[RMDB]
The data come from the RNA Mapping Database (RMDB), library OK1LIB.
This 177-nucleotide RNA was probed chemically with 2A3 and DMS.
Reactivities are given for positions 27 through 126.
DMS adducts were read by reverse transcription with MarathonRT.
Conditions: 150 mM KOAc, 10 mM MgCl2 and 150 mM bicine (pH 8.5), 24 C.
2A3 adducts were read by reverse transcription with SuperScript II with manganese.
RNA sequence: GGGAACGACUCGAGUAGAGUCGAAAACGCUUGCGUACCCGGGACGGUGCGGCUUCGUUGGUUCGGGUCUGUCGCGGUUGGUGAUGUCUGUCGCGUCAGGGCGUGUUCAGGCAGGGCGAAGACGUAAGGAGCAUGUUUGCUUCGGCGAACAUGCUCCAAAAGAAACAACAACAACAAC
Reactivity to 2A3 in 0.01 (KOAc 150mM, MgCl2 10mM, bicine 150mM(pH8.5), 24C), signal-to-noise 1, nucleotides 027 to 126: c070g020c010u030u150g000c000g000u080a080c000c000c000g040g010g010a020c020g000g000u010g000c010g020g000c000u060u040c010g070u000u080g130g030u000u070c000g000g000g060u010c000u040g000u030c050g000c000g060g000u010u090g100g000u020g050a090u120g050u020c000u000g010u020c030g000c020g000u010c010a050g040g100g000c040g020u060g000u050u000c050a000g020g000c050a040g000g000g090c000g000a040a030g000a000c050g020u040a170a180
Reactivity to DMS in 0.01 (KOAc 150mM, MgCl2 10mM, bicine 150mM(pH8.5), 24C), signal-to-noise 1, nucleotides 027 to 126: c020g000c070u030u010g000c160g020u000a080c010c060c080g020g030g010a070c020g000g060u000g000c090g000g000c040u000u000c010g000u000u000g010g000u030u020c080g000g020g020u020c000u000g000u000c040g000c030g030g030u030u030g000g030u050g000a190u010g000u000c050u000g000u020c020g010c060g000u040c020a110g000g000g000c030g040u000g000u000u000c020a030g010g040c030a120g000g000g040c060g000a140a070g000a050c100g000u030a130a060